[RMDB]
RNA sequence: GGGAACGACUCGAGUAGAGUCGAAAAGAAAGAAAGCCGAAGCAGCCAAAGAGGUCAAACGUCAGUAUAUCGGGCGUAAAUACCACCUUAUGCAGAAAGCCGACCUUAAUGUCGUAAAGAAAGAAAAACCGUAUUUACUGUUCGCAGUAAAUACGGUAAAAGAAACAACAACAACAAC
Reactivity to DMS in 0.01 (KOAc 150mM, MgCl2 10mM, bicine 150mM(pH8.5), 24C), signal-to-noise 3, nucleotides 027 to 126: g000a120a130a110g000a070a180a120g040c030c020g020a070a080g000c030a040g030c020c100a060a080a110g000a130g000g050u000c150a080a120a030c100g040u020c010a000g010u020a140u080a110u020c040g030g010g000c040g040u000a020a070a140u050a080c090c030a050c040c060u000u010a030u000g030c030a070g010a070a140a050g020c080c040g000a060c020c040u000u010a020a070u060g000u010c020g040u010a020a050a100g000a110a010a100g000a090a050a000a050
Reactivity to 2A3 in 0.01 (KOAc 150mM, MgCl2 10mM, bicine 150mM(pH8.5), 24C), signal-to-noise 5, nucleotides 027 to 126: g090a000a080a000g060a090a030a020g020c010c010g030a050a020g040c030a010g030c010c070a090a080a040g090a050g000g030u060c030a050a110a040c020g010u010c030a040g080u010a090u040a070u300c050g010g000g020c020g000u030a090a090a000u100a040c000c040a020c020c000u050u010a010u130g030c010a020g050a030a010a000g010c000c010g030a070c000c000u080u130a110a030u160g010u030c010g000u060a080a080a010g100a090a140a010g110a030a090a060a000
Source information:
Conditions: 150 mM KOAc, 10 mM MgCl2 and 150 mM bicine (pH 8.5), 24 C. An RNA of 177 nucleotides, treated with DMS and 2A3 and read out base by base.